[RMDB]
This 177-nucleotide RNA was probed chemically with 2A3 and DMS. DMS adducts were read by reverse transcription with MarathonRT. 2A3 is a SHAPE reagent: it acylates the 2'-hydroxyl of flexible nucleotides of all four kinds. Conditions: 150 mM KOAc, 10 mM MgCl2 and 150 mM bicine (pH 8.5), 24 C. Values cover nucleotides 27 to 126.

RNA sequence: GGGAACGACUCGAGUAGAGUCGAAAAAAAGUCGAGCGUAUUUUGCACCUUUCUCCUCUCCUGAAGAACACUGCGGUGAGCCAGGUCGGGUGCCCGUCGAACUUUGCUCAUGUAGUCAUACAAAGGAACAACUCCAUUGAUUCGUCAAUGGAGUUGUAAAAGAAACAACAACAACAAC
Reactivity to 2A3 in 0.01 (KOAc 150mM, MgCl2 10mM, bicine 150mM(pH8.5), 24C), signal-to-noise 2, nucleotides 027 to 126: a000a000a000g050u030c050g010a060g040c040g000u080a150u070u210u090u120g050c050a040c020c000u020u050u000c050u000c000c000u000c020u010c000c010u110g030a110a040g020a080a020c080a000c060u050g000c040g040g040u040g030a040g060c060c050a010g030g010u020c010g030g030g000u030g040c000c000c020g030u010c010g000a060a060c010u020u020u050g000c000u000c020a010u070g050u110a030g020u030c000a050u120a130c030a020a140a020g080g000a030
Reactivity to DMS in 0.01 (KOAc 150mM, MgCl2 10mM, bicine 150mM(pH8.5), 24C), signal-to-noise 3, nucleotides 027 to 126: a020a030a060g010u000c070g010a100g050c060g020u020a070u000u010u000u000g020c040a090c040c030u010u000u000c030u000c020c030u000c040u010c010c010u010g000a100a060g010a100a100c180a040c040u000g020c060g010g000u010g010a060g020c070c130a030g010g020u010c050g000g000g030u000g020c030c090c020g030u000c050g000a050a030c050u000u000u000g000c000u000c020a070u000g010u000a040g010u000c070a110u010a100c100a060a090a110g040g000a140